[RMDB]
RNA sequence: GGGAACGACUCGAGUAGAGUCGAAAAGAAAAGGCUCGAACUGGUGAUUCGAGAUCCGAAAAGGUUCUCUACUGACACCACUGUUGCGAGUGAACAGUGUGGGAAAUAAACCACAGUAGAAAGAAAAGGGAUCAUAUUAGUUCGCUAAUAUGAUCCCAAAAGAAACAACAACAACAAC
Reactivity to DMS in 0.01 (KOAc 150mM, MgCl2 10mM, bicine 150mM(pH8.5), 24C), signal-to-noise 3, nucleotides 027 to 126: g020a120a100a110a100g010g000c020u000c020g000a030a000c030u020g000g010u010g000a300u020u020c030g000a020g000a050u020c000c020g030a160a070a080a150g010g000u030u000c060u010c000u020a100c070u000g010a160c070a100c120c010a100c070u020g000u000u010g000c050g000a090g020u030g010a040a030c020a060g030u000g000u000g000g000g000a070a100a080u030a060a130a100c000c020a120c000a000g010u020a010g010a070a090a050g020a040a040a060a140
Reactivity to 2A3 in 0.01 (KOAc 150mM, MgCl2 10mM, bicine 150mM(pH8.5), 24C), signal-to-noise 4, nucleotides 027 to 126: g090a000a090a000a020g100g000c010u000c000g000a020a010c000u050g030g000u060g060a170u010u040c040g000a000g010a020u010c000c000g070a150a090a000a000g050g030u030u030c030u000c000u030a070c080u100g100a060c020a010c080c010a030c070u070g020u010u060g160c080g040a060g050u090g040a040a010c020a030g030u000g010u060g020g020g040a070a220a100u210a070a130a040c010c010a010c010a000g010u020a000g060a020a080a020g050a010a060a000a050
The record gives the reactivity of an RNA of 177 nucleotides to DMS and 2A3. Reactivities are rounded to 0.1 and cut off at 0 and 3. Conditions: 150 mM KOAc, 10 mM MgCl2 and 150 mM bicine (pH 8.5), 24 C. The 2A3 profile rests on 3,475 reads. Values cover nucleotides 27 to 126. For DMS, 4,100 sequencing reads were counted. 2A3 adducts were read by reverse transcription with SuperScript II with manganese.